[RMDB]
RNA sequence: GGGAACGACUCGAGUAGAGUCGAAAAGCUCGGAGACGAGCAAGGCUGACAAAACGCUGUCCCAACCUCCACGUGGUGUCGGCUGGAUAAUGCUGCAUUAUGUUGCAUUUAUCAACUGGGAAAUAAAAUUAUAUGAUAUAUUCGUAUAUCAUAUAAUAAAAGAAACAACAACAACAAC
Reactivity to 2A3 in 0.01 (KOAc 150mM, MgCl2 10mM, bicine 150mM(pH8.5), 24C), signal-to-noise 9, nucleotides 027 to 126: g000c000u000c000g020g020a110g010a050c010g000a000g010c000a000a040g030g000c000u020g020a020c020a020a140a050a010c070g040c100u070g050u020c010c000c000a020a050c010c020u060c020c020a080c070g050u080g000g030u030g020u030c000g020g000c010u030g050g000a010u020a040a000u020g010c010u020g000c010a060u120u130a120u300g030u020u020g000c010a010u050u070u090a030u030c020a020a070c050u070g020g040g020a040a150a040u230a030a080a020
Reactivity to DMS in 0.01 (KOAc 150mM, MgCl2 10mM, bicine 150mM(pH8.5), 24C), signal-to-noise 5, nucleotides 027 to 126: g000c010u000c000g000g010a210g010a220c010g010a010g000c030a130a080g010g020c020u000g010a060c040a060a070a060a050c050g000c110u000g000u000c020c000c020a100a090c080c040u030c040c070a250c030g020u000g000g020u010g010u000c010g000g000c020u000g000g010a020u000a030a020u000g000c000u010g000c020a170u030u050a080u040g020u010u000g000c000a000u010u000u030a010u000c000a110a110c140u020g000g000g010a080a070a070u030a070a060a040